The record gives the reactivity of an RNA of 177 nucleotides to DMS and 2A3. The RNA was probed in 150 mM KOAc, 10 mM MgCl2 and 150 mM bicine (pH 8.5) at 24 C. For DMS, 1,654 sequencing reads were counted. It was measured as part of the RMDB library OK2TRN.
RNA sequence: GGGAACGACUCGAGUAGAGUCGAAAAGUCUAGCGAUUUAGGGAUCCGAUCCGGGUUGCAGAACUCAACUGCAUGAGUACACACGCAAGUCGCGUAUUGGCCGACCGUCCAAGGAUCUGCUAGACGAGAUAUGGACCGAUUUCGAUCGGUCCAUAUCAAAAGAAACAACAACAACAAC
Reactivity to DMS in 0.01 (KOAc 150mM, MgCl2 10mM, bicine 150mM(pH8.5), 24C), signal-to-noise 3, nucleotides 027 to 126: g010u000c010u010a010g010c000g010a040u010u010u010a210g030g000g000a060u010c060c010g030a050u000c030c020g020g000g020u000u000g000c030a090g000a120a080c050u000c140a070a100c080u010g010c190a130u020g000a000g020u000a060c160a180c220a090c120g000c090a020a070g000u000c050g030c090g000u000a030u000u000g000g000c300c070g000a110c100c120g010u010c070c060a060a180g000g010a010u000c010u000g050c000u000a000g020a010c010g010a050
Reactivity to 2A3 in 0.01 (KOAc 150mM, MgCl2 10mM, bicine 150mM(pH8.5), 24C), signal-to-noise 2, nucleotides 027 to 126: g000u000c000u000a010g000c010g020a010u000u050u110a200g060g000g010a010u000c000c010g000a010u000c020c010g000g040g040u020u010g000c000a010g040a070a050c020u030c080a040a090c090u230g060c120a080u070g010a020g040u130a090c070a010c000a010c080g000c020a040a060g300u040c040g000c030g060u070a020u020u060g020g030c060c060g050a080c000c040g030u040c030c010a050a140g000g000a000u010c050u090g000c000u000a000g000a000c010g000a010